[RMDB]
RNA sequence: GGGAACGACUCGAGUAGAGUCGAAAACUGAACGGGAAAGGAUUAAGGGUUUAGUGUCCGCUCUUGCCGUAGACUUCGCCGGACACGCCCUGACAGGGAUUUACAAGGCGAACUUGUUCGCGGCUAUCGAUCUUGGGUUGACCGCCAGCGAUAUAAGACUGUUCCCUUUAUUCGUAAAGGGAACAGUAAAAGAAACAACAACAACAAC
Reactivity to 2A3 in 0.01 (KOAc 150mM, MgCl2 10mM, bicine 150mM(pH8.5), 24C), signal-to-noise 2, nucleotides 027 to 156: c060u070g040a030a000c000g000g020g060a000a060a080g070g040a040u060u210a050a040g020g000g010u020u040u110a040g010u050g000u030c000c020g010c000u020c030u020u040g030c020c010g090u020a050g010a060c050u090u060c090g030c070c020g000g000a000c000a000c020g030c000c000c050u020g000a000c050a050g020g010g000a030u010u120u110a120c100a000a070g010g000c010g020a110a110c040u060u070g060u180u150c110g020c000g040g000c020u020a040u070c010g070a010u030c020u030u160g080g000g040u060u050g040a040c010c000g000c020c000a020g010c030g000a000u000a020u010a130a050g050
Reactivity to DMS in 0.01 (KOAc 150mM, MgCl2 10mM, bicine 150mM(pH8.5), 24C), signal-to-noise 2, nucleotides 027 to 156: c070u000g020a080a060c030g010g030g000a100a060a080g020g000a090u000u010a100a100g020g010g010u010u010u000a090g040u010g000u000c000c020g000c030u010c030u000u010g000c060c070g050u000a100g000a080c040u000u000c010g010c070c000g010g010a050c110a060c030g010c000c000c030u000g000a090c110a140g030g000g010a120u010u000u010a050c100a120a140g030g020c020g020a030a110c100u010u000g020u000u010c030g020c000g000g020c020u000a050u000c080g010a050u000c020u000u000g020g010g000u000u000g000a070c000c080g000c010c000a090g000c000g000a080u010a100u000a070a150g000